Chemical mapping of a 207-nucleotide RNA with 2A3 and DMS. For DMS the reverse transcriptase was MarathonRT.

[RMDB]
RNA sequence: GGGAACGACUCGAGUAGAGUCGAAAAGGCUUUCGACAGGAGCAAAGAGACUUAAGUGCAUGUGAGCUGGUAAGCUCUAAAACUACCACAAAUAAAUAAACGCAAACAACGCAAAUUACGCUCCAGCUUACGCAAAAGUCGCGUAAGUUUAUCACACGUAUAGAGUUGACUUCGGUCAACUCUAUACAAAAGAAACAACAACAACAAC
Reactivity to 2A3 in 0.01 (KOAc 150mM, MgCl2 10mM, bicine 150mM(pH8.5), 24C), signal-to-noise 3, nucleotides 027 to 156: g020g010c010u000u060u100c100g030a040c030a070g000g020a000g020c010a010a130a010g100a010g010a030c030u100u140a100a020g040u050g090c040a050u150g090u040g090a010g010c020u000g040g030u090a070a060g000c010u000c000u030a040a050a020a000c020u030a040c040c010a020c070a060a100a020u230a060a090a020u170a040a140a030c120g020c050a100a100a040c070a050a080c040g000c030a050a070a030u090u050a050c090g000c010u000c000c010a000g020c000u010u000a000c000g010c010a060a100a060a090g120u170c090g000c000g010u000a000a000g000u000u040u050a040u070c020a030c010a020c150
Reactivity to DMS in 0.01 (KOAc 150mM, MgCl2 10mM, bicine 150mM(pH8.5), 24C), signal-to-noise 1, nucleotides 027 to 156: g030g000c010u000u010u000c030g020a200c000a270g040g000a030g020c040a070a130a160g000a060g030a020c000u000u000a130a120g010u000g000c050a060u000g070u000g010a100g010c030u000g000g020u000a110a100g010c030u000c030u000a050a080a070a160c020u000a060c100c040a110c070a000a050a090u040a090a050a140u010a080a110a020c060g020c040a070a050a080c090a100a010c020g000c000a030a020a130u010u000a020c040g030c000u000c000c040a050g000c000u000u000a010c010g000c000a110a110a090a140g000u000c080g030c030g050u010a000a020g000u000u000u000a000u030c050a030c040a050c170

2A3 adducts were read by reverse transcription with SuperScript II with manganese. Conditions: 150 mM KOAc, 10 mM MgCl2 and 150 mM bicine (pH 8.5), 24 C.